[RMDB]
RNA sequence: GGGAACGACUCGAGUAGAGUCGAAAAACGCGGUUCUUAGACGUACUUGCAAUGAUUGGUAGGAACCCGCAGUAUACGCAACGAGUGGUGGCGCUGUUCUCUGAAAUGCAAGUGAACUGUGCAGAACCUCCCAUAGGCUGUUCGCAGCCUAUGGGAGAAAAGAAACAACAACAACAAC
Reactivity to DMS in 0.01 (KOAc 150mM, MgCl2 10mM, bicine 150mM(pH8.5), 24C), signal-to-noise 2, nucleotides 027 to 126: a170c140g010c100g000g000u000u020c000u010u010a140g010a160c120g020u000a080c040u000u010g000c050a080a100u050g010a140u000u000g000g030u000a090g030g000a050a050c040c280c050g040c040a050g000u000a060u000a040c080g000c070a070a090c210g030a070g030u010g000g020u000g010g000c040g020c050u010g010u000u000c000u000c030u010g000a080a070a040u000g000c050a010a030g010u000g000a030a050c080u000g030u000g030c050a120g010a090a100c060
Reactivity to 2A3 in 0.01 (KOAc 150mM, MgCl2 10mM, bicine 150mM(pH8.5), 24C), signal-to-noise 1, nucleotides 027 to 126: a000c020g000c050g010g040u000u000c010u040u180a120g050a170c060g020u000a070c020u040u080g040c000a030a240u150g120a220u130u160g070g140u040a050g000g100a010a010c000c000c030g000c000a020g000u090a030u040a070c110g020c060a100a090c190g070a080g060u090g060g010u020g000g040c000g000c050u050g030u070u000c100u000c000u040g130a110a090a060u170g010c010a010a000g000u020g000a050a000c030u090g000u000g000c020a010g000a010a020c000